Chemical mapping of a 177-nucleotide RNA with 2A3 and DMS. The DMS profile rests on 4,128 reads. It was measured as part of the RMDB library OK2TST. 2A3 adducts were read by reverse transcription with SuperScript II with manganese.
[RMDB]
RNA sequence: GGGAACGACUCGAGUAGAGUCGAAAAGUUUACUUUGACCAUUGAUGGUCUUAAUACUCUAUCUUUAAGCUUGUAUCCUUUUUGUAGUUCUUGAGUGAUUUCGCCAGAUUCAAAAUCAGGGUUAUCAAUUCCCGUAAUAGUUCGCUAUUACGGGAAUAAAAGAAACAACAACAACAAC
Reactivity to 2A3 in 0.01 (KOAc 150mM, MgCl2 10mM, bicine 150mM(pH8.5), 24C), signal-to-noise 2, nucleotides 027 to 126: g020u010u090u040a030c030u090u040u050g000a030c010c010a100u040u270g160a180u170g080g020u010c010u010u070a050a030u060a010c020u000c020u030a070u190c040u080u120u070a080a020g030c010u010u070g020u060a180u090c010c000u050u170u020u110u160g130u070a090g010u100u000c000u000u080g080a120g000u070g020a090u030u080u010c090g090c070c000a020g020a050u080u120c120a100a080a060a100u020c010a030g040g010g000u000u020a020u040c000a010
Reactivity to DMS in 0.01 (KOAc 150mM, MgCl2 10mM, bicine 150mM(pH8.5), 24C), signal-to-noise 3, nucleotides 027 to 126: g010u010u010u010a040c110u000u000u000g010a040c020c020a110u010u010g010a110u010g020g000u000c010u000u000a060a100u000a070c060u000c020u010a060u010c030u000u010u000a070a060g010c050u000u000g000u000a100u000c020c000u000u010u000u010u000g010u010a080g020u000u000c020u000u000g010a120g010u000g010a030u000u000u000c040g020c020c010a070g020a050u000u010c300a070a070a080a110u000c020a060g020g000g010u000u000a030u000c040a050